The record gives the reactivity of an RNA of 207 nucleotides to DMS and 2A3. For 2A3, 2,344 sequencing reads were counted.
RNA sequence: GGGAACGACUCGAGUAGAGUCGAAAAAUGGCCGCCCUGCGGGAACGUUUCGGUCUCGACAAUCCGAUUCUGGUGCAACUGGCUAACUACCUAAACAAUCUCGCGCACUUUAGCCUCGGCUUUUCGCCGCGCUAUGGAAUGCCGGUCGCCGACCUUAGGAUUAACUUGAAUUCGUUCAAGUUAAUCCAAAAGAAACAACAACAACAAC
Reactivity to DMS in 0.01 (KOAc 150mM, MgCl2 10mM, bicine 150mM(pH8.5), 24C), signal-to-noise 2, nucleotides 027 to 156: a080u000g000g000c070c000g000c020c050c040u000g070c090g000g010g040a070a090c170g030u000u000u000c020g020g030u000c080u040c090g050a110c180a140a110u000c000c010g020a100u000u030c000u000g040g040u010g000c050a120a100c060u000g020g040c050u010a060a100c120u000a130c050c010u010a080a090a080c070a100a160u000c050u000c010g040c060g020c030a180c060u000u000u000a050g000c040c020u000c050g060g000c020u010u010u000u000c070g030c010c000g020c300g040c040u000a060u000g010g010a060a110u000g010c010c030g000g020u000c030g000c040c000g010a070c070c010u000u000a190
Reactivity to 2A3 in 0.01 (KOAc 150mM, MgCl2 10mM, bicine 150mM(pH8.5), 24C), signal-to-noise 4, nucleotides 027 to 156: a000u050g030g000c000c020g020c010c090c000u060g010c030g000g010g020a040a000c020g010u030u050u030c040g030g000u030c050u070c100g080a050c050a090a060u060c020c020g070a070u190u030c110u250g050g000u080g010c040a070a060c120u090g040g020c010u020a060a040c110u090a050c020c010u060a060a050a010c030a070a120u050c030u020c040g020c020g010c020a060c020u030u030u070a010g000c000c030u100c030g000g000c000u160u130u100u230c130g010c040c000g000c000g000c000u010a020u070g040g060a140a050u090g030c040c010g010g010u030c020g020c080c020g020a050c010c010u080u130a030
Description
2A3 adducts were read by reverse transcription with SuperScript II with manganese. For DMS, 2,614 sequencing reads were counted. Conditions: 150 mM KOAc, 10 mM MgCl2 and 150 mM bicine (pH 8.5), 24 C. Source: RMDB library OK3TST, as collected in RNAgym.